[RMDB]
RNA sequence: GGGAACGACUCGAGUAGAGUCGAAAAGGUUCAGUUCGCUGAACCAAAUGGGGGGGGCCGGGGACGGCUUGGGCCUGCCUAGUCGGCCUGACCACCCACCCCACAAAAAGUGUAUCUUCGGAUACACCUUAAGAAUAGUCUUCGGACUAUUCUUAAGAAAAGAAACAACAACAACAAC
Reactivity to 2A3 in 0.01 (KOAc 150mM, MgCl2 10mM, bicine 150mM(pH8.5), 24C), signal-to-noise 1, nucleotides 027 to 126: g010g020u010u010c010a000g000u030u060c140g020c090u010g000a000a000c000c000a050a040a040u070g000g000g000g000g000g000g000g000c040c020g000g020g010g010a020c010g010g000c010u010u030g020g030g020c070c060u040g060c100c000u010a030g040u030c010g020g000c010c000u010g010a030c030c000a090c080c000c000a100c010c010c040c010a020c030a020a100a010a000a020g000u020g000u000a000u000c010u050u050c150g070g000a000u000a000c000a010c000
Reactivity to DMS in 0.01 (KOAc 150mM, MgCl2 10mM, bicine 150mM(pH8.5), 24C), signal-to-noise 2, nucleotides 027 to 126: g000g010u010u000c000a000g000u010u010c230g010c000u000g000a000a000c000c000a000a050a060u020g010g000g000g000g000g020g000g030c030c050g000g000g000g000a080c060g010g000c000u000u000g030g000g020c120c160u020g010c010c030u000a070g020u000c010g010g010c000c000u000g000a090c010c010a110c010c000c010a110c040c020c000c030a120c220a030a060a060a080a090g010u000g010u000a010u010c010u000u010c200g010g000a020u000a000c000a000c000